[RMDB]
RNA sequence: GGGAACGACUCGAGUAGAGUCGAAAAUAUCCAAGUCGGCGCUAUUGAAUACCCGUGUAUGGCGUUGCUGAGAGGGACAUGCACUGCCAUGCCGGGCGGUGUAUCAAGCCCUAGCGUCGGCUAGAAAAGUCUGAGUUCGAUUCGUCGAGCUCGGGCUAAAAGAAACAACAACAACAAC
Reactivity to 2A3 in 0.01 (KOAc 150mM, MgCl2 10mM, bicine 150mM(pH8.5), 24C), signal-to-noise 1, nucleotides 027 to 126: u300a020u000c000c000a030a000g000u000c000g000g000c000g000c010u000a030u130u220g080a300a140u170a120c000c000c000g070u150g010u130a010u000g010g000c010g050u040u050g000c010u050g070a100g020a160g160g150g040a030c030a050u140g010c010a010c000u040g010c010c000a000u010g000c000c000g000g000g020c000g000g000u090g040u030a120u260c050a140a020g020c000c000c000u000a000g000c000g000u010c000g000g000c000u000a030g000a010a280a010
The record gives the reactivity of an RNA of 177 nucleotides to 2A3. For 2A3 the reverse transcriptase was SuperScript II with manganese. Conditions: 150 mM KOAc, 10 mM MgCl2 and 150 mM bicine (pH 8.5), 24 C. For 2A3, 1,489 sequencing reads were counted. It was measured as part of the RMDB library OK1LIB.